[RMDB]
RNA sequence: GGGAACGACUCGAGUAGAGUCGAAAAAUGCACUACUCACCAGACGCCUCAACCGCCUUUUCAUCAAUCGCCCACAUCACUCGAGACGUAAAUUAUGGCUGAAUCAUCCGCUACCUUCACGCCAAUGGCGCCUCAAUAUUCUUUAUCUGCCUCUUCAAUAUGGUACUCGUUUCGACGAGUACCAUAUAAAAGAAACAACAACAACAAC
Reactivity to DMS in 0.01 (KOAc 150mM, MgCl2 10mM, bicine 150mM(pH8.5), 24C), signal-to-noise 1, nucleotides 027 to 156: a080u000g000c050a170c060u000a070c030u000c030a150c040c000a170g040a050c060g000c030c000u010c060a040a080c020c020g030c060c010u000u020u040u010c040a110u030c040a060a140u010c040g000c000c010c000a060c080a100u000c030a060c030u000c020g000a090g020a040c030g010u010a070a060a120u000u010a100u010g020g000c070u020g010a060a060u010c040a060u010c050c060g040c040u000a070c020c030u010u000c010a070c090g010c000c010a030a120u000g030g010c040g000c010c050u000c030a040a100u000a110u010u000c020u010u000u000a090u020c070u000g000c010c000u000c000u010u000c010a070
Reactivity to 2A3 in 0.01 (KOAc 150mM, MgCl2 10mM, bicine 150mM(pH8.5), 24C), signal-to-noise 3, nucleotides 027 to 156: a000u120g020c020a010c030u080a000c000u040c010a030c010c000a000g000a120c020g050c020c020u060c040a050a030c020c030g020c000c000u050u100u090u110c050a070u050c020a110a070u070c060g090c010c020c000a080c010a090u090c010a010c020u000c020g010a010g000a020c020g040u070a030a110a060u190u110a110u140g000g010c010u010g030a020a030u060c000a040u030c080c020g000c040u010a080c020c000u010u070c050a020c080g000c000c000a020a070u050g020g000c010g010c000c020u030c000a010a040u070a110u220u070c060u070u180u090a160u070c040u040g020c000c000u010c010u040u050c020a020